[RMDB]
RNA sequence: GGGAACGACUCGAGUAGAGUCGAAAAAAGCUUCAACACACCAAAGUUGUUCAAAUCAGUCUAUGCGUAUUUGUUAUGGCUGACAGAGGAACACGGCUCUGACAUCCUAGCUGCGAUGACCGGAACACCUGCUCCUUUAAUUCGUUAAAGGAGCAGGAAAAGAAACAACAACAACAAC
Reactivity to 2A3 in 0.01 (KOAc 150mM, MgCl2 10mM, bicine 150mM(pH8.5), 24C), signal-to-noise 4, nucleotides 027 to 126: a000a000g030c050u130u080c040a140a080c030a010c010a020c050c040a090a010a060g050u070u060g020u020u040c010a020a050a110u010c000a020g030u000c040u100a080u200g070c030g080u120a280u070u170u220g040u110u160a040u140g020g010c000u000g000a030c060a000g080a030g070g050a050a020c030a020c080g020g010c000u000c010u040g060a030c000a030u000c010c000u000a020g010c010u040g020c030g070a030u040g060a030c060c000g040g040a060a010c030a000
Reactivity to DMS in 0.01 (KOAc 150mM, MgCl2 10mM, bicine 150mM(pH8.5), 24C), signal-to-noise 3, nucleotides 027 to 126: a020a080g040c030u000u000c080a040a080c110a050c110a110c080c000a080a070a120g010u000u010g020u000u010c050a040a110a140u010c030a060g020u010c000u010a070u010g000c020g020u070a070u020u040u020g040u000u000a050u020g000g030c030u000g000a010c100a100g010a090g000g010a050a030c050a090c070g000g010c000u010c040u020g000a060c070a050u000c020c020u000a070g000c040u000g000c080g000a040u000g010a070c090c000g010g000a040a070c180a120
Source: RMDB library OK1LIB, as collected in RNAgym. Structure probing data (2A3 and DMS) for a 177-nucleotide construct. The reactions ran in a buffer of 150 mM KOAc, 10 mM MgCl2 and 150 mM bicine (pH 8.5), at 24 C. Reactivities are given for positions 27 through 126. The 2A3 profile rests on 2,896 reads.